Overview:
An RNA of 177 nucleotides, treated with 2A3 and DMS and read out base by base. The 2A3 profile rests on 1,962 reads. The RNA was probed in 150 mM KOAc, 10 mM MgCl2 and 150 mM bicine (pH 8.5) at 24 C. High 2A3 reactivity points to a flexible backbone, as in loops and unpaired stretches. For DMS, 2,278 sequencing reads were counted.
[RMDB]
RNA sequence: GGGAACGACUCGAGUAGAGUCGAAAAGGUGAAUCAGAAUGCAAGCAGGUGGGAAAGUUUUGAUGUCACCCCCGCUGUGAUGCGGUGGACUGCACAGGGACACGCCAACCAUGGAUUCGUGGUGGAAGUCAGCCUAUUGGUUCGCCAAUAGGCUGACAAAAGAAACAACAACAACAAC
Reactivity to 2A3 in 0.01 (KOAc 150mM, MgCl2 10mM, bicine 150mM(pH8.5), 24C), signal-to-noise 4, nucleotides 027 to 126: g020g000u020g010a040a010u040c020a020g020a040a030u100g020c030a000a100g050c050a060g140g120u220g050g080g030a020a140a070g020u020u000u020u010g090a090u070g090u100c020a030c060c000c000c000c010g000c000u080g010u080g060a090u130g010c010g060g000u090g010g040a090c070u050g010c010a000c000a040g000g000g070a030c040a030c040g050c010c020a070a060c030c000a020u050g010g100a230u150u170c060g030u020g010g030u030g030g020a030a070
Reactivity to DMS in 0.01 (KOAc 150mM, MgCl2 10mM, bicine 150mM(pH8.5), 24C), signal-to-noise 2, nucleotides 027 to 126: g030g050u000g000a050a040u020c070a050g080a060a010u040g040c020a120a110g020c010a120g000g010u000g020g000g040a110a070a200g000u000u000u000u030g010a060u020g020u000c010a080c010c020c020c030c020g000c010u000g000u050g000a220u000g000c120g000g020u000g000g000a120c170u050g000c000a030c040a060g000g020g030a080c080a020c120g000c010c060a100a110c020c000a070u000g000g030a070u030u010c060g050u000g030g020u000g000g000a030a120